[RMDB]
RNA sequence: GGGAACGACUCGAGUAGAGUCGAAAACAGAUGAUGUUCGCAUCAUCUGAAAUAAAAGCCAUGCUGGAAGGAAGGAGCAUGGCAACCAACCAACCAAAAUAAAAAUCUGUUCCUUCGGGAACAGAAACACCGAAUAAGUCUUCGGACUUAUUCGGUGAAAAGAAACAACAACAACAAC
Reactivity to 2A3 in 0.01 (KOAc 150mM, MgCl2 10mM, bicine 150mM(pH8.5), 24C), signal-to-noise 2, nucleotides 027 to 126: c000a000g010a000u000g020a000u000g030u050u130c230g020c080a010u020c000a000u000c000u000g010a010a010a000u070a020a050a000a010g020c010c000a000u000g000c000u100g050g250a160a080g100g030a070a020g020g070a000g010c010a000u000g000g000c000a000a010c010c010a000a020c010c020a010a060c000c010a120a070a080a080u240a060a130a070a010a020u010c000u000g010u000u040c000c010u000u030c230g090g000g000a020a000c000a000g010a000a000a000
Background:
This 177-nucleotide RNA was probed chemically with 2A3. The 2A3 profile rests on 2,313 reads.